[RMDB]
Source: RMDB library OK2TRN, as collected in RNAgym. An RNA of 177 nucleotides, treated with 2A3 and DMS and read out base by base. For 2A3 the reverse transcriptase was SuperScript II with manganese. For 2A3, 4,030 sequencing reads were counted. The reactions ran in a buffer of 150 mM KOAc, 10 mM MgCl2 and 150 mM bicine (pH 8.5), at 24 C. For DMS the reverse transcriptase was MarathonRT.

RNA sequence: GGGAACGACUCGAGUAGAGUCGAAAAAAGGUCUACUAUUCAACCUUGAUUGAUUGGAGCAGGACCACUGAGCAUUACACUGCGGCAGACAUGGGGUCGGAGUUGAGGGUAAAUGCUGACGGGGACCCUGCAAUAAUUGUUUCGACAAUUAUUGCAGAAAAGAAACAACAACAACAAC
Reactivity to 2A3 in 0.01 (KOAc 150mM, MgCl2 10mM, bicine 150mM(pH8.5), 24C), signal-to-noise 4, nucleotides 027 to 126: a000a000g040g000u020c030u080a100c050u070a180u060u090c030a000a030c010c060u110u080g080a180u100u110g020a060u020u080g070g020a050g040c080a080g020g040a020c020c010a010c060u010g030a010g000c020a050u060u110a050c050a010c070u050g050c030g070g000c030a010g050a130c040a110u120g040g080g020g020u080c030g020g030a060g040u100u090g040a100g010g030g010u050a060a070a000u080g010c040u030g030a030c060g030g000g000g040a010c040c030
Reactivity to DMS in 0.01 (KOAc 150mM, MgCl2 10mM, bicine 150mM(pH8.5), 24C), signal-to-noise 7, nucleotides 027 to 126: a080a030g000g010u000c010u010a110c090u000a130u000u000c030a040a020c020c040u000u000g010a170u010u010g010a060u000u010g010g000a070g010c120a070g010g000a050c040c020a130c100u010g010a090g020c030a040u000u010a090c140a090c080u000g000c050g000g010c040a070g000a070c100a090u010g010g000g020g010u000c050g010g000a090g010u000u000g010a100g000g000g010u000a050a060a070u010g010c040u010g010a110c070g000g000g010g000a140c100c070